[RMDB]
RNA sequence: GGGAACGACUCGAGUAGAGUCGAAAAGCGUGGCAGUUCGCUGCCACGCAAAUAAAAACGAGGAGCGGUAGGCCUCGAAAAAUGCCGCAAGAUCAAAGAACAAAAGGCCAACGUUCGCGUUGGCCAACUACACUCAUCAGUUCGCUGAUGAGUGUAGAAAAGAAACAACAACAACAAC
Reactivity to DMS in 0.01 (KOAc 150mM, MgCl2 10mM, bicine 150mM(pH8.5), 24C), signal-to-noise 1, nucleotides 027 to 126: g010c010g080u000g020g000c000a000g020u000u040c100g010c000u000g000c000c010a020c010g010c000a010a020a080u000a110a020a050a060a190c080g000a010g020g000a210g000c000g000g010u000a030g050g020c010c000u010c000g020a040a060a110a050a100u000g010c000c000g030c030a180a150g000a170u000c120a020a150a130g020a150a050c100a040a060a140a100g010g030c010c000a000a040c010g000u010u000c240g010c010g000u000u000g000g010c000c010a000a040
Reactivity to 2A3 in 0.01 (KOAc 150mM, MgCl2 10mM, bicine 150mM(pH8.5), 24C), signal-to-noise 1, nucleotides 027 to 126: g000c000g040u020g000g020c020a000g000u040u080c130g050c120u010g030c010c000a010c010g020c010a000a010a000u010a000a000a000a000a000c070g000a000g020g070a070g000c010g010g000u050a030g110g200c010c000u000c000g080a060a070a000a000a020u020g010c020c020g050c030a040a000g050a050u150c130a130a110a060g030a110a110c110a080a100a010a030g000g000c010c000a000a000c000g000u070u080c290g010c000g120u030u000g000g010c000c000a000a010